[RMDB]
RNA sequence: GGGAACGACUCGAGUAGAGUCGAAAACUGUCUCAGUAUUCAUCCCCUGAUCAAGGAUGCCCGAAACGGUGAGGCGGAAAGCAAAUUAAAUAACGUCAACCCAUCGGGACGGUUGGCCAGUUAAGAAAAAACCGGGGAGUCUUCGGACUCCCCGGAACAUCUUGAUAAUCUUCGGAUUAUCAAGAUGAAAAGAAACAACAACAACAAC
Reactivity to 2A3 in 0.01 (KOAc 150mM, MgCl2 10mM, bicine 150mM(pH8.5), 24C), signal-to-noise 1, nucleotides 027 to 156: c010u020g040u040c020u020c130a130g060u070a110u130u180c060a030u010c000c020c000c000u030g000a060u060c020a030a000g000g090a050u090g080c010c020c010g080a100a090a090c070g000g000u090g030a180g030g030c100g020g050a140a120a000g070c100a050a060a050u170u110a090a150a120u240a040a030c000g000u000c000a010a010c030c000c010a030u000c000g040g050g000a000c020g040g030u030u060g000g010c030c000a070g010u070u020a080a020g110a030a170a050a020a020a050c010c000g120g000g000g000a000g010u010c000u100u040c120g030g010a000c000u030c000c080c000c000g000g000a000a000